[RMDB]
RNA sequence: GGGAACGACUCGAGUAGAGUCGAAAAAUGAGAGUCUGAAAGAUGUAUGUCAGAUGGAUUUCUGCAAGAGGAAAGGAUUCAAGCUCCCAUCCGGUGUCUGGUUUGAAAUCGAGGAUGCAGAGAAAUCGGAAAUGCAACAGUUCGCUGUUGCAUUUCCAAAAGAAACAACAACAACAAC
Reactivity to 2A3 in 0.01 (KOAc 150mM, MgCl2 10mM, bicine 150mM(pH8.5), 24C), signal-to-noise 2, nucleotides 027 to 126: a000u250g010a060g020a000g050u000c040u070g090a040a000a020g090a110u110g090u290a050u160g090u030c010a000g000a000u060g040g030a040u020u060u100c050u030g030c010a000a040g020a090g070g140a030a030a090g060g010a010u040u050c000a060a000g000c030u020c030c010c000a050u050c000c120g030g000u090g060u060c050u050g020g030u000u090u060g070a070a080a000u030c000g000a030g140g000a070u040g010c000a000g030a030g000a000a140a010u150c060
Reactivity to DMS in 0.01 (KOAc 150mM, MgCl2 10mM, bicine 150mM(pH8.5), 24C), signal-to-noise 1, nucleotides 027 to 126: a050u030g030a150g000a060g000u000c020u070g000a090a040a060g040a110u000g020u010a040u070g030u030c020a050g000a120u000g040g000a090u080u030u000c000u060g000c000a040a110g000a090g010g010a090a050a130g000g000a080u040u000c050a090a020g000c090u000c080c020c040a030u030c080c040g000g010u000g000u010c030u020g000g000u000u000u040g000a040a010a000u020c040g000a110g000g020a110u030g010c080a040g000a030g000a040a070a060u010c070
An RNA of 177 nucleotides, treated with 2A3 and DMS and read out base by base. Source: RMDB library OK1LIB, as collected in RNAgym. 2A3 adducts were read by reverse transcription with SuperScript II with manganese. The 2A3 profile rests on 1,026 reads. Values cover nucleotides 27 to 126.